[RMDB]
RNA sequence: GGGAACGACUCGAGUAGAGUCGAAAAGCAGCUGUUCAAAGGAACUGUAGAACAGAUGUCACAGAUGUAACUAUUCUUGAAAGGAAGUCAGAUUUCAUAGAUGGAAAGACUGCCCUUUUCCAUUUGCCUCCUCCAGACCCAUAACUUUGGAUAGGGAAAUGCAUAGUGAUUUCGAUCACUAUGCAUUAAAAGAAACAACAACAACAAC
Reactivity to DMS in 0.01 (KOAc 150mM, MgCl2 10mM, bicine 150mM(pH8.5), 24C), signal-to-noise 4, nucleotides 027 to 156: g010c030a060g020c050u000g000u000u000c030a040a160a170g010g000a070a110c120u010g010u000a200g010a030a080c040a050g020a060u000g010u000c040a190c090a120g010a120u000g020u000a070a100c080u010a090u000u000c040u000u000g000a090a100a110g010g000a090a060g010u000c040a110g010a240u000u000u010c030a110u010a120g000a120u000g010g000a050a060a070g000a070c020u000g010c050c020c010u000u000u000u000c010c010a100u000u000u000g000c030c020u020c020c000u000c020c020a090g000a110c030c000c050a070u000a060a090c090u000u000u000g010g010a090u000a080g000g030g010a090
Reactivity to 2A3 in 0.01 (KOAc 150mM, MgCl2 10mM, bicine 150mM(pH8.5), 24C), signal-to-noise 6, nucleotides 027 to 156: g020c010a010g010c000u020g000u050u030c020a040a020a090g110g030a170a100c060u090g050u130a060g010a020a010c010a010g020a040u040g040u060c030a020c010a090g060a050u080g030u090a050a060c030u030a100u120u090c050u070u110g060a080a050a020g010g010a030a020g020u030c030a040g040a280u030u090u050c060a060u100a120g090a080u100g030g010a020a010a020g020a040c040u080g010c000c020c000u030u030u030u010c010c010a020u030u020u150g030c000c010u020c010c010u010c020c000a030g020a100c020c000c020a050u070a160a030c030u050u060u070g020g000a010u060a050g020g010g030a050
The data come from the RNA Mapping Database (RMDB), library OK3TST. This 207-nucleotide RNA was probed chemically with DMS and 2A3. The reactions ran in a buffer of 150 mM KOAc, 10 mM MgCl2 and 150 mM bicine (pH 8.5), at 24 C. For 2A3, 5,039 sequencing reads were counted. DMS adducts were read by reverse transcription with MarathonRT.